[RMDB]
RNA sequence: GGGAACGACUCGAGUAGAGUCGAAAAGUAGUCGUUGGCCGUCACCAGCAGCGGACGCCCGGCGUACCACGGCGUCCAGGGCGGCUGGCCGGUCUCCUCGGCGAGCCAGGCUUGAACCCGGCGGUUCCUAACCGUGCCGUUUCGACGGCACGGUUAGAAAAGAAACAACAACAACAAC
Reactivity to 2A3 in 0.01 (KOAc 150mM, MgCl2 10mM, bicine 150mM(pH8.5), 24C), signal-to-noise 2, nucleotides 027 to 126: g090u110a010g020u010c030g010u040u020g020g000c030c000g010u050c030a010c050c000a000g040c030a030g050c040g020g000a010c010g040c040c070c020g080g000c060g010u060a120c020c050a070c110g000g000c010g010u030c000c030a060g100g210g030c020g000g030c020u000g020g020c010c000g000g010u030c080u060c030c040u030c000g050g000c020g010a030g010c050c010a040g090g000c030u050u160g040a050a060c000c010c000g010g020c020g030g000u030u020c020
Reactivity to DMS in 0.01 (KOAc 150mM, MgCl2 10mM, bicine 150mM(pH8.5), 24C), signal-to-noise 1, nucleotides 027 to 126: g040u000a050g010u000c050g030u010u000g000g000c020c000g000u010c220a250c000c000a020g000c010a070g020c020g000g030a010c000g020c000c000c020g010g020c250g010u000a040c020c090a110c240g010g010c020g000u010c000c020a260g000g020g020c000g000g000c000u030g050g040c170c060g020g000u000c040u060c070c140u000c000g000g030c030g000a050g000c010c000a090g000g010c010u030u000g000a180a160c080c020c010g000g000c000g000g000u030u010c010